[RMDB]
RNA sequence: GGGAACGACUCGAGUAGAGUCGAAAAAGCAUCGCGGACUGGGAGAAGAGAGGCGAAGAAAAGAAGGGGAGUCCCCGAUCGAAUGUCCAUAGGCAGAGAAACCUCUGGAGUCCUCUAGACCGCAAGGGAAGCCGGCGCUUCGGCGCCGGCAAAAGAAACAACAACAACAAC
Reactivity to 2A3 in 0.01 (KOAc 150mM, MgCl2 10mM, bicine 150mM(pH8.5), 24C), signal-to-noise 1, nucleotides 027 to 129: a000g040c000a000u110c040g000c080g100g010a030c010u030g000g010g010a170g000a080a000g090a000g000a090g080g000c010g030a010a110g010a040a030a030a000g110a000a070g040g010g000g030a080g040u160c000c000c010c000g000a000u000c040g000a120a100u040g000u030c060c070a020u100a100g030g000c020a000g110a000g050a270a080a050c040c070u000c000u000g030g000a000g020u010c030c070u070c000u000a030g000a040c060c000g110c040a000a000g010g000g000a080a000